[RMDB]
The data come from the RNA Mapping Database (RMDB), library OK2TST. An RNA of 177 nucleotides, treated with DMS and 2A3 and read out base by base. DMS adducts were read by reverse transcription with MarathonRT. Values cover nucleotides 27 to 126. The reactions ran in a buffer of 150 mM KOAc, 10 mM MgCl2 and 150 mM bicine (pH 8.5), at 24 C. For 2A3 the reverse transcriptase was SuperScript II with manganese.

RNA sequence: GGGAACGACUCGAGUAGAGUCGAAAACGGCUGUCCCGGCGGCCAUGCCCGCCUGGAACUCGCCCCUCCAGGGCGGGUAUGCCGAGUGUCUCCUCGUGCUUGCCGCGGGGAUGCUCGCUGCGAGCGAGCCACUGAAAAUCUUCGGAUUUUCAGUGGCAAAAGAAACAACAACAACAAC
Reactivity to DMS in 0.01 (KOAc 150mM, MgCl2 10mM, bicine 150mM(pH8.5), 24C), signal-to-noise 5, nucleotides 027 to 126: c100g010g010c030u000g010u010c010c000c020g020g030c030g010g030c060c200a050u000g010c040c010c000g020c000c010u000g010g010a090a060c010u000c180g000c030c030c130c240u000c090c080a060g020g010g020c000g000g000g010u000a010u000g000c050c010g010a060g010u000g000u000c060u000c040c010u000c060g020u000g010c060u000u010g020c050c030g000c040g010g010g000g010a030u010g000c010u000c010g020c050u000g000c080g010a100g010c040g010a100
Reactivity to 2A3 in 0.01 (KOAc 150mM, MgCl2 10mM, bicine 150mM(pH8.5), 24C), signal-to-noise 3, nucleotides 027 to 126: c030g050g000c030u050g020u030c000c000c000g020g000c010g020g010c090c070a160u160g010c000c000c010g000c010c000u000g000g000a020a020c010u010c010g020c010c000c000c000u040c030c040a060g050g070g030c000g000g010g020u020a040u070g000c010c010g000a020g050u100g070u020c040u040c030c010u050c030g070u110g030c040u080u150g030c070c000g000c010g000g010g000g030a050u160g070c000u010c010g020c030u060g030c030g050a040g030c010g020a020